[RMDB]
Chemical mapping of a 177-nucleotide RNA with 2A3. The RNA was probed in 150 mM KOAc, 10 mM MgCl2 and 150 mM bicine (pH 8.5) at 24 C. For 2A3 the reverse transcriptase was SuperScript II with manganese. It was measured as part of the RMDB library OK1LIB.
RNA sequence: GGGAACGACUCGAGUAGAGUCGAAAACUUAGCUAAAACAUUACUUUACGCAAUCAAUGGUGGUAAAGAUGAAAAAUCUGGUGCACAAGUUGGUCCAAACUUCGAAGGUAUUAACAGCGAAGUAUUAAGCUGGUCUGUCAUUCGUGACAGACCAGCUAAAAGAAACAACAACAACAAC
Reactivity to 2A3 in 0.01 (KOAc 150mM, MgCl2 10mM, bicine 150mM(pH8.5), 24C), signal-to-noise 1, nucleotides 027 to 126: c000u070u050a000g110c020u120a130a050a040a050c000a070u090u090a000c000u000u000u000a020c020g090c270a000a000u300c000a020a110u300g120g000u120g030g000u060a000a000a000g040a000u000g300a000a000a300a000a000u060c070u250g070g070u090g000c000a000c140a140a090g040u040u040g000g000u000c000c000a070a000a000c000u000u000c000g000a020a020g000g000u050a120u040u040a020a000c000a050g120c040g120a000a000g000u000a080u040u050a080